[RMDB]
RNA sequence: GGGAACGACUCGAGUAGAGUCGAAAAAAGAUGACCCAGAGCUGGUGGGUGCCUGGGGCCACAGAGUUCCCCCCACUCCAUAACCAGUUAUGCACAGGCCCUUCCCACUGCCCCUGCUGAUUGAGGGACUUAUACUGCGUUUCGACGCAGUAUAAGUAAAAGAAACAACAACAACAAC
Reactivity to DMS in 0.01 (KOAc 150mM, MgCl2 10mM, bicine 150mM(pH8.5), 24C), signal-to-noise 4, nucleotides 027 to 126: a070a100g010a150u000g000a150c040c030c010a090g000a110g010c050u000g010g020u000g010g010g000u010g000c100c100u010g010g010g000g030c060c070a070c150a130g000a110g010u000u010c020c010c010c010c020c030a220c030u010c030c050a050u000a080a050c070c080a110g010u010u000a040u010g010c130a100c190a110g000g010c020c020c030u010u000c000c010c010a080c070u010g000c070c010c000c050u000g010c060u000g000a110u010u000g000a090g010g000g010
Reactivity to 2A3 in 0.01 (KOAc 150mM, MgCl2 10mM, bicine 150mM(pH8.5), 24C), signal-to-noise 2, nucleotides 027 to 126: a000a000g180a060u120g050a090c020c020c010a010g040a010g060c090u050g000g010u030g040g000g030u070g030c040c060u070g030g000g020g030c060c010a050c080a060g060a040g010u170u230c000c000c030c010c010c010a050c010u030c020c020a050u030a090a020c020c010a020g010u060u020a060u100g020c030a020c030a070g020g000c000c000c000u030u010c020c000c000a000c040u030g030c010c000c000c000u020g030c040u110g060a110u030u130g020a090g000g040g000